RNA sequence: GGGAACGACUCGAGUAGAGUCGAAAACGGUUACGCCUUCUUUACCGUUAUCAAGGAAGGUACUCGGCCAUGCUAAGGGAAGCAUUAUUCCUUGGGCGCAUGUCGCCGCCAGCAUGGUGUGAGGGGAAAAAGUAUGCUGGGUUCGCCCAGCAUACAAUCACGGUACCAAGUUCGCUUGGUACCGUGAAAAAGAAACAACAACAACAAC
Reactivity to 2A3 in 0.01 (KOAc 150mM, MgCl2 10mM, bicine 150mM(pH8.5), 24C), signal-to-noise 3, nucleotides 027 to 156: c000g010g010u000u040a020c030g000c000c000u000u000c000u010u040u120a040c020c000g300u100u090a030u050c080a020a000g040g000a000a010g010g010u070a080c000u000c010g020g000c000c000a010u000g000c000u040a170a170g010g000g000a040a000g050c110a260u150u110a170u250u030c010c020u030u060g060g010g000c020g000c040a120u210g130u300c040g000c030c000g050c060c020a000g000c000a000u000g060g020u060g100u120g060a030g020g020g010g100a000a180a000a000a000g010u000a000u000g000c000u000g050g000g040u010u070c160g120c040c000c000a010g000c000a000u000a000c000a000a000